[RMDB]
RNA sequence: GGGAACGACUCGAGUAGAGUCGAAAAGAUAUGGAUAAGAUCGAUAAGCUCCCGUCGGAAACGACGGCGAGCUUUUGACGAUCUGUCCUAAGUCAAACAGUGCUAUAUGUUCGCAUAUAGCACUGAAUCCUAAAUCAGUGUUCGCACUGAUUUAGGAAAAAGAAACAACAACAACAAC
Reactivity to 2A3 in 0.01 (KOAc 150mM, MgCl2 10mM, bicine 150mM(pH8.5), 24C), signal-to-noise 3, nucleotides 027 to 126: g000a000u030a020u060g020g000a020u160a300a220g000a000u010c010g010a040u030a300a010g010c000u000c000c000c000g000u010c000g000g020a060a030a020c010g010a000c000g000g020c050g000a000g020c050u000u000u010u010g000a000c000g000a010u020c000u010g000u010c000c000u000a040a010g010u010c030a090a050a090c000a070g000u000g000c000u000a000u000a000u010g030u040u050c050g000c020a000u000a000u000a000g030c000a010c000u000g000a000a010
Reactivity to DMS in 0.01 (KOAc 150mM, MgCl2 10mM, bicine 150mM(pH8.5), 24C), signal-to-noise 5, nucleotides 027 to 126: g000a030u010a150u010g000g000a010u000a040a010g000a010u000c000g010a090u010a020a020g010c000u010c000c000c000g000u000c000g010g000a030a030a070c010g000a010c000g000g010c300g000a010g010c010u000u000u000u010g010a260c050g000a000u000c000u000g000u000c000c000u000a020a100g000u000c010a140a100a250c010a010g010u000g000c000u000a010u000a000u000g010u000u010c220g040c000a010u000a000u000a010g000c000a010c000u000g000a040a080